[RMDB]
RNA sequence: GGGAACGACUCGAGUAGAGUCGAAAACCAGCUCCACAUUCCUCCCUCCAGCUCCCCACUUCACCGGAGACCGAGCCCUGCAUGCAGAGGAAGGGCCCCAGCUCCACAGACUGCCAAAGUCGACAGGAUGAUCCGAAGAUUUCGAUCUUCGGAUCAUAAAAGAAACAACAACAACAAC
Reactivity to 2A3 in 0.01 (KOAc 150mM, MgCl2 10mM, bicine 150mM(pH8.5), 24C), signal-to-noise 3, nucleotides 027 to 126: c000c000a000g010c000u040c020c000a050c000a110u070u020c010c020u020c000c000c000u040c000c000a020g000c020u050c020c010c010c000a020c020u080u060c040a040c060c030g040g020a060g020a040c020c010g010a010g060c010c000c000u010g030c040a120u110g030c010a020g050a020g190g060a080a050g000g000g000c000c000c000c010a010g010c020u040c020c010a050c010a040g030a020c000u050g010c040c030a060a100a020g040u050c030g050a070c020a020g050g050
Reactivity to DMS in 0.01 (KOAc 150mM, MgCl2 10mM, bicine 150mM(pH8.5), 24C), signal-to-noise 2, nucleotides 027 to 126: c000c000a080g030c030u000c010c020a040c070a140u010u000c010c010u000c020c000c070u010c030c020a120g010c020u010c030c030c030c050a080c080u020u000c040a100c060c040g000g010a060g020a040c040c080g000a140g000c030c010c020u010g030c090a100u020g020c040a010g020a090g000g000a190a050g000g000g030c030c040c050c100a070g000c030u010c020c000a090c110a050g000a050c020u000g000c090c110a070a090a060g000u000c020g010a090c250a060g010g020
Structure probing data (2A3 and DMS) for a 177-nucleotide construct. The 2A3 profile rests on 2,579 reads. Conditions: 150 mM KOAc, 10 mM MgCl2 and 150 mM bicine (pH 8.5), 24 C. For 2A3 the reverse transcriptase was SuperScript II with manganese. The DMS profile rests on 3,003 reads.